[RMDB]
RNA sequence: GGGAACGACUCGAGUAGAGUCGAAAAUCUCAAAGCUUCGGCUUUGAGACAGUAAGGGAAUCCGAUUAUUCCGGUCGACUCCGGAGAAACAAAGUCAAAUAAGAACGUUAGGCUUCGGCCUAACGAACACUCCAGGGGGAUUCGUCCCCCUGGAGUGAAAAGAAACAACAACAACAAC
Reactivity to 2A3 in 0.01 (KOAc 150mM, MgCl2 10mM, bicine 150mM(pH8.5), 24C), signal-to-noise 2, nucleotides 027 to 126: u000c010u000c000a000a010a000g000c010u080u220c300g050g000c000u000u000u000g000a000g010a000c000a010g090u090a070a070g090g020g090a090a110u070c020c040g020a010u080u060a270u300u000c030c000g000g000u030c040g000a000c050u040c300c000g000g000a040g030a010a000a000c010a000a000a050g010u070c050a000a010a080u240a070a100g070a160a020c010g000u000u000a000g000g030c010u040u040c160g040g010c000c010u010a010a000c000g000a000a000
Reactivity to DMS in 0.01 (KOAc 150mM, MgCl2 10mM, bicine 150mM(pH8.5), 24C), signal-to-noise 1, nucleotides 027 to 126: u000c000u000c000a000a000a020g000c020u000u030c290g060g020c000u000u000u000g000a020g010a010c130a030g000u000a080a080g010g000g010a170a110u030c030c030g000a150u010u000a130u000u020c000c020g000g030u000c000g000a030c000u040c000c050g000g000a010g000a050a000a210c080a030a010a010g010u010c000a110a050a150u020a130a050g000a060a050c000g000u010u000a020g000g010c000u000u000c270g030g000c000c000u000a000a030c000g000a030a090